[RMDB]
RNA sequence: GGGAACGACUCGAGUAGAGUCGAAAAAGAUGAAGUCGAUAUGAACUUCCGCCGAUGUUGGUGUAGACUGAAAGAAAGGAAUGUCAGCAUCUUGACAGAUUGAACUCGAAUUUUAGGAUGGAACAUACAAGGAGUAGCCUAGAACAUUCCAAGUCAGUCACACACACAUUUUCGAAUGUGUGUGUGAAAAAGAAACAACAACAACAAC
Reactivity to 2A3 in 0.01 (KOAc 150mM, MgCl2 10mM, bicine 150mM(pH8.5), 24C), signal-to-noise 2, nucleotides 027 to 156: a000g110a180u150g020a000a000g010u040c110g010a070u070a120u300g040a130a000c010u040u000c010c000g010c000c040g090a090u110g000u050u000g010g070u050g030u020a050g040a050c030u040g060a000a070a000g160a010a110a030g040g010a020a020u020g020u020c040a010g040c000a090u000c010u130u070g080a080c070a130g020a180u120u160g000a060a020c080u060c150g060a190a150u060u090u110u160a110g030g010a010u060g080g040a180a000c090a060u220a040c040a010a030g000g040a010g090u080a020g010c010c020u040a020g000a020a000c000a000u000u000c020c010a050a040g040u040c000a030g020
Reactivity to DMS in 0.01 (KOAc 150mM, MgCl2 10mM, bicine 150mM(pH8.5), 24C), signal-to-noise 1, nucleotides 027 to 156: a130g020a160u010g000a090a040g030u000c040g030a240u000a130u000g010a070a060c000u000u000c010c040g010c000c090g000a120u000g050u000u000g050g020u000g000u000a030g010a050c050u000g000a070a090a180g060a120a110a130g000g010a050a130u000g020u000c000a070g060c060a080u000c030u000u020g020a110c100a140g020a100u010u000g000a030a100c060u000c040g050a070a100u010u010u010u010a060g010g020a080u000g000g020a060a080c080a080u010a040c040a080a090g010g000a120g040u000a050g030c010c000u010a030g000a030a110c000a090u010u000c000c000a000a110g000u000c040a170g010
An RNA of 207 nucleotides, treated with 2A3 and DMS and read out base by base. Values cover nucleotides 27 to 156. For 2A3 the reverse transcriptase was SuperScript II with manganese. The 2A3 profile rests on 792 reads. Conditions: 150 mM KOAc, 10 mM MgCl2 and 150 mM bicine (pH 8.5), 24 C. For DMS the reverse transcriptase was MarathonRT.